[RMDB]
RNA sequence: GGGAACGACUCGAGUAGAGUCGAAAAUAGAGGAAAGUCCAGGCUCGCCCAAGCUGAGAUGCUUGGAGUGUUCGUACCUGGCGCAAGCCAGGGCAAGUGAGGCGCAAGCCUCGCUGACGGCGUGGAAUGCUACUCAGAAAUUCGUUUCUGAGUAGCAAAAAGAAACAACAACAACAAC
Reactivity to 2A3 in 0.01 (KOAc 150mM, MgCl2 10mM, bicine 150mM(pH8.5), 24C), signal-to-noise 5, nucleotides 027 to 126: u130a010g100a020g010g130a110a070a010g060u030c010c000a010g010g060c020u020c030g010c000c010c000a000a000g000c000u030g010a020g020a060u120g020c010u000u020g020g030a160g040u050g050u080u100c070g010u080a250c000c000u000g020g000c000g010c030a080a030g000c000c010a000g000g010g000c000a010a040g000u010g010a000g000g010c000g000c050a050a010g000c000c000u000c000g000c000u010g030a030c040g030g020c080g010u020g000g020a050a030
Reactivity to DMS in 0.01 (KOAc 150mM, MgCl2 10mM, bicine 150mM(pH8.5), 24C), signal-to-noise 8, nucleotides 027 to 126: u050a090g010a100g010g000a070a050a080g020u010c010c010a030g000g000c010u010c060g010c080c000c000a010a010g000c000u000g000a200g000a070u000g000c010u000u000g000g010a110g020u010g020u000u010c100g010u010a080c000c010u000g000g000c000g010c250a070a100g020c000c000a010g000g020g000c100a080a010g010u000g010a000g000g000c000g000c230a100a160g010c000c000u000c010g000c000u010g000a100c080g000g000c030g010u000g000g000a150a130